RNA sequence: GGGAACGACUCGAGUAGAGUCGAAAACAGAUAUAGAAGAGCCUUCCUAGCUAUCCCUAUACUCAUUACAACAUUAUCUGAGAUAAUCAUUAUCCUAGGGGUCGCUUCAAUAAUCCAUUGGAACAUAGCGAGGAUGGUACUUCGGUACCAUCCUCGCAAAAGAAACAACAACAACAAC
Reactivity to 2A3 in 0.01 (KOAc 150mM, MgCl2 10mM, bicine 150mM(pH8.5), 24C), signal-to-noise 1, nucleotides 027 to 126: c000a000g280a020u130a000u240a080g190a150a000g000a000g120c000c000u000u000c000c000u000a000g000c030u000a000u000c000c000c000u000a000u000a080c000u050c090a080u200u000a110c000a190a140c090a140u240u090a050u240c000u000g000a000g000a030u060a000a080u130c050a000u080u300a060u050c000c140u020a020g000g000g000g000u000c000g000c000u000u190c070a000a300u190a030a000u000c000c000a280u200u220g000g020a140a160c110a020u110a000